This 207-nucleotide RNA was probed chemically with 2A3 and DMS. For 2A3, 1,294 sequencing reads were counted. Reactivities are given for positions 27 through 156. The data come from the RNA Mapping Database (RMDB), library OK3TST. The reactions ran in a buffer of 150 mM KOAc, 10 mM MgCl2 and 150 mM bicine (pH 8.5), at 24 C.
RNA sequence: GGGAACGACUCGAGUAGAGUCGAAAAGGAAGUGACCUACUUUCACUCAUCAUCACUGAGGCUAACCCUGAAGAGGGCUGUUUCUGCCCGUCUUUUCCUGUCAUCUUGGCAGCUAUCACCCCUGUUUCAACCAGGAUGCAUAAAAUUAAUGAAGCAACGGAAAAUUAGGAUUCGUCCUAAUUUUCCGAAAAGAAACAACAACAACAAC
Reactivity to 2A3 in 0.01 (KOAc 150mM, MgCl2 10mM, bicine 150mM(pH8.5), 24C), signal-to-noise 3, nucleotides 027 to 156: g060g000a040a020g040u060g080a130c020c020u060a090c040u140u060u050c050a050c030u040c030a080u030c020a030u070c010a040c140u020g000a010g030g030c010u070a090a040c010c010c010u040g060a040a020g020a040g020g000g000c050u040g020u040u080u000c030u010g030c010c000c010g180u060c050u000u070u080u040c020c010u050g060u070c000a050u010c030u040u030g010g000c020a030g000c050u080a090u260c020a080c010c010c000c010u020g050u030u140u100c030a020a030c020c010a000g000g030a040u040g000c020a010u140a110a130a080a070u140u210a080a080u120g020a050a020g000c020a060a020
Reactivity to DMS in 0.01 (KOAc 150mM, MgCl2 10mM, bicine 150mM(pH8.5), 24C), signal-to-noise 1, nucleotides 027 to 156: g040g010a100a040g010u010g040a140c050c000u000a130c040u000u020u010c050a010c020u040c040a060u000c040a090u020c020a130c140u000g000a060g020g060c080u000a130a030c020c010c010u020g000a200a090g020a160g000g060g030c030u010g010u000u000u000c030u000g000c020c000c040g000u050c040u000u000u000u000c030c040u000g000u000c030a070u010c020u000u000g010g050c000a090g020c060u000a050u000c090a120c010c000c000c020u000g010u000u000u000c040a090a060c080c020a040g000g030a050u000g000c140a040u020a040a020a050a060u000u020a120a100u030g000a110a090g000c040a140a210